RNA sequence: GGGAACGACUCGAGUAGAGUCGAAAAGGUUGGGCAAGCGAAGGAUUGGGUCGUCAACAAGUUCGGCGAGCUGGUCGGGUUCCUCGGCAGUCUGCCGGGGCGUGUCGGCGCUGCGCUGGGCGGACUGCAACAGCGAAAUGUUCGCAUUUCGCUGUUGAAAAGAAACAACAACAACAAC
Reactivity to DMS in 0.01 (KOAc 150mM, MgCl2 10mM, bicine 150mM(pH8.5), 24C), signal-to-noise 6, nucleotides 027 to 126: g020g010u000u000g010g000g010c090a070a090g020c060g020a100a080g010g010a100u000u000g010g000g010u000c040g000u000c060a070a070c120a090a100g010u000u000c050g010g010c030g010a080g010c040u010g020g020u000c020g000g000g000u000u000c020c010u000c110g000g010c000a080g010u000c110u000g010c000c000g010g010g010g000c090g020u000g010u010c040g010g010c030g010c040u000g000c030g020c020u010g000g000g010c010g010g000a060c070u000g010
Reactivity to 2A3 in 0.01 (KOAc 150mM, MgCl2 10mM, bicine 150mM(pH8.5), 24C), signal-to-noise 3, nucleotides 027 to 126: g080g020u080u060g010g000g010c060a090a030g030c040g100a070a020g040g030a060u070u090g050g040g020u040c030g020u050c000a020a030c020a080a080g060u040u070c020g020g010c010g020a020g030c090u070g030g030u030c020g010g000g010u040u020c010c010u010c020g040g010c010a030g120u070c090u100g000c010c010g050g020g010g020c010g000u100g070u060c030g020g030c020g010c070u140g020c020g000c010u020g040g040g000c010g000g010a010c020u080g000